[RMDB]
RNA sequence: GGGAACGACUCGAGUAGAGUCGAAAAGAUAUGGAAUUGUAGCGCGAUAAGAUGGUAUCGGAAACGAUACUCAUCUUUUGACGCGUGAGGAUUCCUAAGUCAAAACAAUCCCCUUCGGGGGAUUGAAGAUCAUAAGGUAGUUCGCUACCUUAUGAUCAAAAGAAACAACAACAACAAC
Reactivity to DMS in 0.01 (KOAc 150mM, MgCl2 10mM, bicine 150mM(pH8.5), 24C), signal-to-noise 8, nucleotides 027 to 126: g010a030u000a300u000g010g000a010a000u000u000g000u010a300g000c000g020c000g020a160u000a010a010g010a010u000g000g000u000a000u000c010g010g000a090a090a180c000g000a010u000a000c010u010c010a010u000c000u000u000u010u010g020a200c120g000c010g010u000g010a230g020g000a010u000u000c000c000u010a040a150g000u010c030a090a090a130a290c010a010a010u000c010c000c000c010u000u030c220g010g010g010g000g000a010u000u000g010a080a110
Reactivity to 2A3 in 0.01 (KOAc 150mM, MgCl2 10mM, bicine 150mM(pH8.5), 24C), signal-to-noise 5, nucleotides 027 to 126: g020a010u050a030u140g000g020a010a010u030u220g030u070a010g010c040g000c060g110a100u110a300a010g010a010u020g000g010u000a000u000c010g000g010a050a020a010c010g000a000u000a010c000u030c030a010u000c000u020u020u030u070g080a060c090g000c000g000u000g010a050g040g070a010u010u000c000c000u000a080a010g030u020c030a010a020a070a190c000a000a010u000c000c020c020c020u010u160c290g190g010g010g000g000a000u000u010g000a010a020